[RMDB]
RNA sequence: GGGAACGACUCGAGUAGAGUCGAAAAGAUUAAGUGGGAGCGUCGCCCUCUCGGUGCAUCGGAUAUUAAUUAGCCAGUGCGUGGCACUACGCAUAUUGAUGUCUACUUUGGCGUAGACUAUGCCAAUUUAAGGAUUGAUGGGCAAUCCAGCCCUAGACAGUAUUACCCGAUUCGUCGGGUAAUACUGAAAAGAAACAACAACAACAAC
Reactivity to DMS in 0.01 (KOAc 150mM, MgCl2 10mM, bicine 150mM(pH8.5), 24C), signal-to-noise 2, nucleotides 027 to 156: g000a170u000u000a020a110g040u000g000g000g000a100g000c090g000u010c100g020c010c030c030u000c030u010c020g020g010u030g040c030a050u000c040g040g010a030u000a060u000u000a050a100u010u000a180g010c050c010a040g030u000g000c020g030u000g010g030c010a120c010u000a060c070g020c010a150u000a060u000u010g000a110u000g010u000c050u010a080c030u000u000u000g010g030c050g030u000a030g010a070c070u000a030u000g010c010c010a010a070u000u010u000a080a110g010g020a100u000u000g040a130u000g020g010g010c020a090a130u010c070c090a170g000c000c010c000u000a070g000a210
Reactivity to 2A3 in 0.01 (KOAc 150mM, MgCl2 10mM, bicine 150mM(pH8.5), 24C), signal-to-noise 4, nucleotides 027 to 156: g060a040u140u170a110a010g070u100g010g020g020a060g030c000g040u060c030g060c010c000c030u030c010u020c030g020g000u050g010c020a030u070c040g040g010a000u020a030u130u180a160a050u070u070a040g030c050c030a020g010u040g010c030g020u080g050g010c070a030c100u120a020c020g000c020a010u030a070u080u090g070a090u080g020u000c010u030a030c030u050u090u120g030g000c000g020u020a020g040a050c040u020a040u090g040c020c010a040a020u070u060u090a110a050g080g000a050u040u080g060a060u120g020g010g040c000a000a040u060c020c020a000g000c000c010c000u000a040g010a020
Record summary:
The record gives the reactivity of an RNA of 207 nucleotides to DMS and 2A3. For DMS, 4,357 sequencing reads were counted. The data come from the RNA Mapping Database (RMDB), library OK3TST. The 2A3 profile rests on 2,886 reads. Values cover nucleotides 27 to 156. The RNA was probed in 150 mM KOAc, 10 mM MgCl2 and 150 mM bicine (pH 8.5) at 24 C.